Record summary:
The record gives the reactivity of an RNA of 177 nucleotides to DMS and 2A3.

RNA sequence: GGGAACGACUCGAGUAGAGUCGAAAAGAUAUGGAGAAACUCGAUGAGGCUACGUCGGAAACGACGUGAGCCGAGAGUUCCUCCUAAGUCAAACGAUGCCCUUUAGCUUCGGCUAAAGGGCAUCGAAGACAUAAUCGAUCUUCGGAUCGAUUAUGUCAAAAGAAACAACAACAACAAC
Reactivity to DMS in 0.01 (KOAc 150mM, MgCl2 10mM, bicine 150mM(pH8.5), 24C), signal-to-noise 3, nucleotides 027 to 126: g010a020u000a300u000g010g010a000g010a030a000a010c020u000c010g010a180u010g000a230g000g010c000u000a030c000g000u000c010g010g000a090a090a150c000g010a010c010g010u010g010a010g020c000c000g000a060g000a010g010u000u000c010c000u000c000c000u000a010a060g000u000c030a080a120a280c030g000a010u000g010c000c000c000u000u000u000a000g010c000u000u000c220g040g010c000u000a010a000a010g000g010g010c000a000u000c000g010a020a060
Reactivity to 2A3 in 0.01 (KOAc 150mM, MgCl2 10mM, bicine 150mM(pH8.5), 24C), signal-to-noise 2, nucleotides 027 to 126: g010a010u080a020u060g000g000a000g000a000a050a010c000u020c060g300a300u300g140a120g030g000c020u000a000c010g000u020c020g000g020a040a040a010c000g000a000c000g010u060g070a000g010c000c000g000a000g010a000g000u040u020c000c010u000c010c000u010a060a020g000u010c020a050a100a120c030g000a000u000g010c000c030c000u000u000u010a000g000c000u020u050c300g140g030c000u030a000a000a000g010g000g010c000a000u000c010g000a010a000
2A3 adducts were read by reverse transcription with SuperScript II with manganese. The data come from the RNA Mapping Database (RMDB), library TTRDEL. For 2A3, 3,349 sequencing reads were counted. Values cover nucleotides 27 to 126. For DMS the reverse transcriptase was MarathonRT.